[RMDB]
RNA sequence: GGGAACGACUCGAGUAGAGUCGAAAAGUUGACUCAAGUUUGGUUACUUCUGUUGGUGAUUCUAGUGAAAUCGCCACUAAAAUGUUUGAUUCCUUUGUUAAUAGUUUCGUCUCGCUGUAUAAUGUCACUGUUGUAUCCAGUUCGCUGGAUACAACAGAAAAGAAACAACAACAACAAC
Reactivity to DMS in 0.01 (KOAc 150mM, MgCl2 10mM, bicine 150mM(pH8.5), 24C), signal-to-noise 1, nucleotides 027 to 126: g010u000u010g040a020c050u000c020a100a060g000u000u010u000g000g010u010u000a050c060u030u000c100u000g010u010u000g010g040u000g000a060u000u010c050u000a120g000u010g040a100a030a030u000c000g020c020c000a020c060u000a060a030a060a080u010g000u000u000u000g000a130u000u000c020c010u000u000u020g000u000u000a110a100u000a100g010u000u000u000c060g000u000c060u000c060g000c000u000g020u000a050u000a070a110u000g020u000c120a140